[RMDB]
RNA sequence: GGGAACGACUCGAGUAGAGUCGAAAAGCGCAUCGAGAAGGCCACCGCCUUCGACCGCAUGAAUCAAGACAUGUAAACUGUGUGUAUGUGAAUGCUUUAUUCAUAAUAAACAGCACAUGUUUAUGCCACCUUCUCUGAGGCUCUGACUUUAUUUAGAACGAAUUUAAGGGUUCGCCCUUAAAUUCGUAAAAGAAACAACAACAACAAC
Reactivity to 2A3 in 0.01 (KOAc 150mM, MgCl2 10mM, bicine 150mM(pH8.5), 24C), signal-to-noise 4, nucleotides 027 to 156: g070c060g000c020a050u060c080g020a010g010a050a020g010g020c080c090a160c080c110g050c000c030u090u040c030g000a010c010c040g060c040a040u090g070a040a070u160c100a070a000g030a030c010a010u040g020u040a020a090a100c030u010g010u000g010u030g020u100a060u100g020u010g040a020a000u070g070c120u100u270u300a020u010u030c000a010u020a130a010u040a040a150a010c020a000g050c060a000c000a040u020g010u000u100u080a050u060g020c040c010a010c010c000u080u020c040u030c060u120g050a040g040g010c000u000c020u050g050a060c010u130u160u110a150u110u210u040a160g030a080
Reactivity to DMS in 0.01 (KOAc 150mM, MgCl2 10mM, bicine 150mM(pH8.5), 24C), signal-to-noise 2, nucleotides 027 to 156: g030c060g020c030a060u000c080g010a150g020a010a030g000g020c030c040a130c180c070g010c010c020u000u000c090g010a080c040c090g060c080a090u000g020a070a020u010c000a040a080g000a010c000a000u010g010u000a050a040a040c010u010g020u010g000u020g010u000a050u010g030u000g000a020a000u000g030c220u010u010u000a060u030u000c010a020u010a080a070u000a050a060a030c030a020g090c040a050c000a000u000g000u000u000u000a040u010g000c000c040a060c020c020u000u010c010u000c020u000g030a090g010g010c030u000c030u000g000a100c040u000u000u000a080u020u000u010a080g000a150
An RNA of 207 nucleotides, treated with 2A3 and DMS and read out base by base. The data come from the RNA Mapping Database (RMDB), library OK3TST. Reactivities are given for positions 27 through 156. For 2A3 the reverse transcriptase was SuperScript II with manganese. Conditions: 150 mM KOAc, 10 mM MgCl2 and 150 mM bicine (pH 8.5), 24 C. The DMS profile rests on 4,745 reads.